RNA sequence: GGGAACGACUCGAGUAGAGUCGAAAAGCAUACGGUUACUGGUGUCGACGGAAGGAGGAACCACCAUCGGAGUAAUGCCGAUGGAGAGCGACAGCAGCGCGUGUGCCUUCAGCGAAAGCAGUGCCUCCACGAGCUCAUCAUUCGUGAUGAGCUCGUGAAAAGAAACAACAACAACAAC
Reactivity to DMS in 0.01 (KOAc 150mM, MgCl2 10mM, bicine 150mM(pH8.5), 24C), signal-to-noise 1, nucleotides 027 to 126: g000c020a120u000a010c000g070g000u020u050a130c000u000g000g000u020g000u060c000g000a050c120g040g000a000a000g000g050a220g000g030a040a100c110c020a300c000c000a040u010c000g000g000a110g020u040a120a060u150g010c000c000g070a020u000g000g000a020g030a070g060c080g000a040c000a040g000c030a000g020c300g000c000g010u000g000u000g000c000c000u000u000c080a220g000c030g000a140a140a140g010c000a110g000u000g000c110c000u000c050
Reactivity to 2A3 in 0.01 (KOAc 150mM, MgCl2 10mM, bicine 150mM(pH8.5), 24C), signal-to-noise 4, nucleotides 027 to 126: g000c000a010u010a030c050g160g050u230u100a030c000u000g220g010u030g110u020c000g020a160c050g080g090a020a160g060g100a070g050g090a070a080c010c000a010c010c000a010u000c000g010g010a020g060u300a210a110u300g070c030c020g010a000u010g010g030a020g010a020g040c020g000a020c000a040g080c030a000g000c120g000c010g050u020g010u030g020c000c000u040u020c050a060g000c000g060a060a090a010g010c020a040g060u030g130c010c010u030c000
Record summary: Source: RMDB library OK1LIB, as collected in RNAgym. The record gives the reactivity of an RNA of 177 nucleotides to DMS and 2A3. For 2A3, 1,891 sequencing reads were counted. 2A3 adducts were read by reverse transcription with SuperScript II with manganese.